RNA sequence: GGGAACGACUCGAGUAGAGUCGAAAACGCUGGGAAUUGUCAGAACGCGUACACUCCCCACCCUGAAGCGCGCACGGGAGGUGUACUAAGCUGAUUGUUCCUGUGCUGAAGCGCGCACGGCAACCGAAAGGUGCGGAAUUGUCACUUCGGUGACAAACCAAAGUGGAAAAUUCGUUUUCCACUUUGGAAAAGAAACAACAACAACAAC
Reactivity to DMS in 0.01 (KOAc 150mM, MgCl2 10mM, bicine 150mM(pH8.5), 24C), signal-to-noise 2, nucleotides 027 to 156: c070g010c000u000g000g010g010a060a000u000u010g050u010c030a040g000a090a110c140g000c210g060u000a040c010a030c020u000c020c000c030c010a200c240c100c110u020g020a070a100g040c010g020c020g040c040a130c060g000g000g030a010g000g030u010g000u000a010c010u020a060a150g050c010u000g000a080u000u000g020u000u020c000c040u050g020u010g030c010u010g000a090a100g000c030g050c020g000c040a300c000g060g020c000a050a070c040c000g000a060a080a160g000g020u000g030c000g020g010a100a140u000u010g010u000c000a010c010u000u000c300g060g000u000g010a000c030a070a050a210
Reactivity to 2A3 in 0.01 (KOAc 150mM, MgCl2 10mM, bicine 150mM(pH8.5), 24C), signal-to-noise 6, nucleotides 027 to 156: c060g000c020u070g000g000g010a020a020u060u060g020u010c010a020g050a300a100c170g060c080g160u000a000c000a000c000u020c000c000c000c020a080c040c040c060u120g120a170a030g020c000g000c010g000c010a070c120g010g000g000a050g050g100u030g000u010a020c040u080a150a090g180c020u000g000a010u020u030g020u020u000c000c000u020g060u060g020c030u070g020a090a020g000c020g010c000g000c000a010c000g060g010c020a060a080c000c010g020a110a050a030g000g000u010g000c010g010g030a120a150u090u050g000u000c010a000c010u060u070c140g090g000u010g000a010c000a010a010a010
Background:
Chemical mapping of a 207-nucleotide RNA with DMS and 2A3. For 2A3, 7,744 sequencing reads were counted. High DMS reactivity at an A or C suggests that its Watson-Crick edge is free. It was measured as part of the RMDB library RNAMAK. For 2A3 the reverse transcriptase was SuperScript II with manganese. The reactions ran in a buffer of 150 mM KOAc, 10 mM MgCl2 and 150 mM bicine (pH 8.5), at 24 C.